RNA sequence: GGGAACGACUCGAGUAGAGUCGAAAAGUUAGGCGAGGCUCCUAUACAAACACAGGUUGCUGAUCUGACGACGUCGAGAGACGCCCAAGAUUAGGACUGGAUAUAUCGAACCAAGGUAUAUCCCCAUAAAACUCGGAACACUUCGGUGUUCCGAGAAGAAAUACCGGUGGUUCGCCACCGGUAUUUCAAAAGAAACAACAACAACAAC
Reactivity to 2A3 in 0.01 (KOAc 150mM, MgCl2 10mM, bicine 150mM(pH8.5), 24C), signal-to-noise 1, nucleotides 027 to 156: g040u050u040a000g000g060c060g070a180g150g010c100u020c050c010u090a000u120a190c070a100a090a000c130a010c030a070g110g030u200u150g080c010u010g000a010u000c000u000g010a000c000g010a010c000g010u000c000g010a010g010a020g000a130c000g010c000c000c010a010a020g020a160u080u090a020g060g000a000c030u020g000g000a000u000a000u000a000u040c020g000a060a110c100c050a120a000g000g000u050a010u000a010u040c040c000c000c000a120u300a070a210a020a050c010u000c020g000g000a000a000c010a010c020u070u130c240g130g000u000g000u000u000c000c000g000a000g000a000a010